[RMDB]
RNA sequence: GGGAACGACUCGAGUAGAGUCGAAAAGAUAUGGAACCAUCUAUAGGGAGCUGUAGUGUCGGAAACGACAUGAUCAGCGUUGAUCUAUAGAGUGGUUCCUAAGUCAAACUUCGCGUUCGCGCGAAGACUUGAUAGACGACUUCGGUCGUCUAUCAAGAAAAGAAACAACAACAACAAC
Reactivity to DMS in 0.01 (KOAc 150mM, MgCl2 10mM, bicine 150mM(pH8.5), 24C), signal-to-noise 2, nucleotides 027 to 126: g010a060u010a300u000g030g010a000a000c000c010a060u000c000u000a010u000a000g030g000g010a020g010c000u000g010u000a270g000u000g010u000c010g000g000a170a100a260c000g000a000c000a000u000g020a190u020c010a010g010c010g010u000u010g000a020u020c000u000a010u000a030g000a060g010u000g010g010u000u000c000c000u000a000a060g000u000c020a150a100a230c010u000u000c010g060c020g030u000u010c300g000c020g010c020g000a000a000g000a080
Reactivity to 2A3 in 0.01 (KOAc 150mM, MgCl2 10mM, bicine 150mM(pH8.5), 24C), signal-to-noise 1, nucleotides 027 to 126: g050a030u070a020u140g020g000a020a000c000c000a010u010c020u020a020u000a000g000g020g000a010g030c000u000g020u000a030g020u010g010u010c000g040g040a060a050a100c010g000a000c020a010u060g020a150u300c000a010g010c020g000u000u010g010a000u000c000u010a000u000a030g030a030g020u040g000g000u000u000c000c000u000a020a010g040u010c030a050a040a110c000u000u000c000g010c000g040u050u050c300g000c000g000c000g150a000a000g000a170